[RMDB]
RNA sequence: GGGAACGACUCGAGUAGAGUCGAAAAGCGUGUUGACCAGGAUGCCGAUGACGCCUGCCGAGGCCAGCGUCAGCACGCGCGCGAACCGUCGCCGCAGUAGGCCUGCUGUUCGCGCCGCUGGGUCGGCGAGGCUGGCUGCCGGCGAGGGGCUUCCGAGACCCUCUGUAAGGUUCGCCUUACAGAGGGUAAAAGAAACAACAACAACAAC
Reactivity to 2A3 in 0.01 (KOAc 150mM, MgCl2 10mM, bicine 150mM(pH8.5), 24C), signal-to-noise 2, nucleotides 027 to 156: g010c010g000u000g000u020u000g010a040c030c040a060g110g080a240u170g020c060c020g090a150u170g180a080c050g080c070c140u170g060c040c010g040a060g000g020c010c040a050g020c090g150u030c000a010g030c030a000c000g000c000g000c000g000c000g080a040a080c000c000g110u000c000g000c000c000g000c100a080g030u090a090g010g050c000c000u070g030c010u030g160u290u090c070g040c000g020c140c000g050c080u300g110g040g070u220c020g050g010c000g020a040g010g000c030u040g070g010c010u030g080c070c040g010g000c000g010a010g000g000g010g000c030u070u030c010c000g030a030g050